[RMDB]
RNA sequence: GGGAACGACUCGAGUAGAGUCGAAAAAGCUCGUGGUACGCCAUGAGCAACCGGAAGCCCUGGCAGGGUGCGCACCGGAUAAAGCGGCCCUACCUCACCGGCACAGCGUGCCUUACGAGGCACGCAAAAAACGCAGAACGCUUCGGCGUUCUGCGAACGAUAUAUUGAGGUUCGCCUCAAUAUAUCGAAAAGAAACAACAACAACAAC
Reactivity to 2A3 in 0.01 (KOAc 150mM, MgCl2 10mM, bicine 150mM(pH8.5), 24C), signal-to-noise 3, nucleotides 027 to 156: a000g010c010u000c010g000u000g010g000u020a040c170g040c050c000a010u020g000a000g000c000a000a000c000c000g000g020a070a030g030c000c000c040u020g020g030c020a030g020g020g010u180g280c020g000c010a110c070c090g130g040a160u250a130a110a020g000c000g000g000c000c000c010u020a020c000c000u040c010a060c020c000g030g000c050a030c040a140g010c010g000u000g020c010c020u040u030a110c230g040a020g000g000c000a010c000g000c010a060a030a000a010a000a000c010g000c000a000g010a000a000c000g000c000u060u130c180g140g000c010g000u020u000c000u000g000c000g000a010a000
Reactivity to DMS in 0.01 (KOAc 150mM, MgCl2 10mM, bicine 150mM(pH8.5), 24C), signal-to-noise 1, nucleotides 027 to 156: a130g000c010u000c000g020u000g020g010u000a090c300g090c000c000a030u020g010a030g030c020a020a030c020c010g040g000a170a190g000c080c010c050u000g030g060c000a060g000g020g030u020g010c000g010c050a300c140c050g000g030a160u020a050a090a160g000c000g000g020c000c000c000u000a010c010c000u030c080a110c060c040g000g000c080a080c120a140g000c040g050u000g010c000c000u000u010a040c150g020a090g040g000c000a030c050g000c000a000a000a030a060a080a010c040g040c010a000g000a020a020c000g050c010u010u000c210g120g000c000g040u010u000c000u000g010c000g000a000a040
Structure probing data (2A3 and DMS) for a 207-nucleotide construct.
For 2A3 the reverse transcriptase was SuperScript II with manganese.
The data come from the RNA Mapping Database (RMDB), library M2RFPK.